This 177-nucleotide RNA was probed chemically with 2A3 and DMS.

RNA sequence: GGGAACGACUCGAGUAGAGUCGAAAAGAUCGGCGUCAUGAACGGGUAUGCCUUGGCCUGGUCCAGGUCGUCGUCGCCCGCCCGGAAGAAGAAUUCGUUGGCGUGCGAGCCGGACAGCAGCACGACCCAGAGCAAAAUACUUCGGUAUUUUGCUCUGAAAAGAAACAACAACAACAAC
Reactivity to 2A3 in 0.01 (KOAc 150mM, MgCl2 10mM, bicine 150mM(pH8.5), 24C), signal-to-noise 3, nucleotides 027 to 126: g050a070u100c020g020g000c020g050u060c040a070u080g070a100a030c020g020g020g010u070a070u170g050c030c000u050u120g060g000c030c100u040g060g030u060c020c020a020g030g000u030c010g030u020c010g010u010c030g040c030c010c000g010c020c000c000g070g040a060a030g040a080a010g050a040a150u030u020c010g020u050u050g000g020c000g010u010g040c000g010a050g060c000c010g040g080a030c030a020g050c000a000g000c000a010c030g100a150c030c020
Reactivity to DMS in 0.01 (KOAc 150mM, MgCl2 10mM, bicine 150mM(pH8.5), 24C), signal-to-noise 4, nucleotides 027 to 126: g000a060u010c030g020g000c020g010u000c030a090u000g020a070a090c060g000g020g010u010a080u010g010c060c050u000u000g020g000c020c030u010g010g000u010c030c040a060g020g000u000c010g020u000c030g000u000c040g020c010c020c020g000c030c000c040g000g000a080a070g000a100a130g010a100a190u000u000c030g020u020u000g010g010c000g030u000g010c000g010a100g010c030c050g000g000a120c130a110g000c040a190g000c030a040c020g000a140c020c040
The DMS profile rests on 5,230 reads.
The RNA was probed in 150 mM KOAc, 10 mM MgCl2 and 150 mM bicine (pH 8.5) at 24 C.